[RMDB]
RNA sequence: GGGAACGACUCGAGUAGAGUCGAAAACGCUGGGAGUUAGGCAUGUACAUGCGAUACUAGGGUCGUUGAUCUACUGAAGCGCGCACGGUAGGGAGACCCAUAUCGCAUGUACAUGUAAACUCCUGUGCUGAAGCGCGCACGGCAACCGAAAGGUGCGGAUUGUCUUACCCUUCGGGGUAAGACAAUCAAAAGAAACAACAACAACAAC
Reactivity to 2A3 in 0.01 (KOAc 150mM, MgCl2 10mM, bicine 150mM(pH8.5), 24C), signal-to-noise 1, nucleotides 027 to 156: c050g010c030u080g030g040g020a030g010u110u170a210g000g250c010a000u020g000u010a010c000a000u020g000c000g010a010u020a010c200u250a300g000g000g000u010c030g140u200u010g000a000u000c000u020a000c010u020g070a180a030g030c010g010c000g020c030a030c030g000g020u020a020g000g010g000a020g010a000c020c010c000a000u010a000u000c000g000c000a000u010g000u000a000c000a000u000g000u000a000a000a000c000u000c000c000u000g000u010g000c020u020g020a130a020g010c000g000c000g010c000a020c030g020g010c020a040a050c000c010g050a080a020a030g060g000u050g000c030g080